An RNA of 170 nucleotides, treated with 2A3 and DMS and read out base by base. For DMS, 15,153 sequencing reads were counted. The RNA was probed in 150 mM KOAc, 10 mM MgCl2 and 150 mM bicine (pH 8.5) at 24 C. For 2A3 the reverse transcriptase was SuperScript II with manganese.
[RMDB]
RNA sequence: GGGAACGACUCGAGUAGAGUCGAAAAGAGUUCAAUUUGCCAGGUUGUGAUGGCGGUAGUUUGUAUGUUAACAAGCACGCUUUUCAUACACCAGCAUAUGAUGUGAGUGCAUUCCGUGAUCUGAAACUGAGUGGUCUGUUCGCAGACCACAAAAGAAACAACAACAACAAC
Reactivity to 2A3 in 0.01 (KOAc 150mM, MgCl2 10mM, bicine 150mM(pH8.5), 24C), signal-to-noise 4, nucleotides 027 to 129: g090a000g000u010u090c060a020a060u000u060u020g000c010c030a080g000g000u000u000g000u040g010a000u000g010g000c000g000g080u160a150g030u000u020u000g060u050a120u190g230u120u200a110a000c000a020a000g000c040a000c020g000c000u140u210u060u030c010a000u000a010c040a000c030c020a000g010c000a000u010a040u090g090a080u100g050u040g020a000g030u030g000c020a010u080u000c050c030g090u040g010a070u010c020u040g080a040a020a070c010u030g020a000
Reactivity to DMS in 0.01 (KOAc 150mM, MgCl2 10mM, bicine 150mM(pH8.5), 24C), signal-to-noise 3, nucleotides 027 to 129: g040a190g000u040u010c040a110a090u060u030u030g020c010c100a070g030g050u020u050g010u000g080a020u010g000g040c000g030g040u060a060g000u000u000u000g020u040a110u000g030u000u000a100a020c040a000a010g040c020a110c040g020c020u020u050u010u010c000a000u000a060c090a040c000c000a190g000c040a020u020a050u060g050a070u010g000u030g020a070g040u000g010c030a080u030u030c050c080g010u020g030a000u010c050u060g000a070a080a060c000u000g020a170